[RMDB]
This 207-nucleotide RNA was probed chemically with DMS and 2A3.
RNA sequence: GGGAACGACUCGAGUAGAGUCGAAAAGGAGGAUUCCGCUGCUUUGCGCUUUUUUUUCGGAUUAGGCGUGGAGGCGAAAGUCACCCUCCUCGCAUCGCAAGUUCGUGCUUGCGACUUACACGUAGGGAAAAACCCAUUGACUUCGGUCAAUGGGUAACAGUAGAUAUCCCUUCGGGGAUAUCUACUGAAAAGAAACAACAACAACAAC
Reactivity to DMS in 0.01 (KOAc 150mM, MgCl2 10mM, bicine 150mM(pH8.5), 24C), signal-to-noise 1, nucleotides 027 to 156: g020g020a070g020g010a290u000u000c010c030g020c050u010g010c020u000u000u010g010c000g000c000u000u010u000u000u000u000u010u010c180g000g010a080u000u010a050g010g030c030g020u000g010g010a050g030g010c020g000a030a050a050g000u000c050a090c030c000c000u000c000c010u000c030g060c300a090u000c020g040c010a000a040g000u000u000c270g000u000g000c000u000u000g010c020g000a020c030u010u000a120c060a060c100g000u000a040g000g010g000a050a030a100a100a110c030c000c010a020u010u030g000a020c000u010u020c300g070g000u000c000a010a010u000g010g010g030u000a000a010
Reactivity to 2A3 in 0.01 (KOAc 150mM, MgCl2 10mM, bicine 150mM(pH8.5), 24C), signal-to-noise 2, nucleotides 027 to 156: g010g010a020g010g010a040u070u010c030c010g010c020u040g030c030u010u010u020g000c030g000c040u010u000u010u010u000u000u000u040c190g110g040a080u070u090a040g010g000c010g020u010g000g010a010g010g020c000g030a110a040a000g040u090c030a050c020c010c000u010c000c000u010c040g060c030a070u030c000g020c000a040a020g010u160u290c090g190u300g110c000u000u010g000c000g000a000c030u080u120a030c060a020c150g150u110a070g030g050g060a050a100a030a000a000c010c000c000a000u010u010g000a000c000u040u010c110g080g000u000c000a000a000u020g010g020g000u000a000a000
2A3 adducts were read by reverse transcription with SuperScript II with manganese. The 2A3 profile rests on 1,355 reads.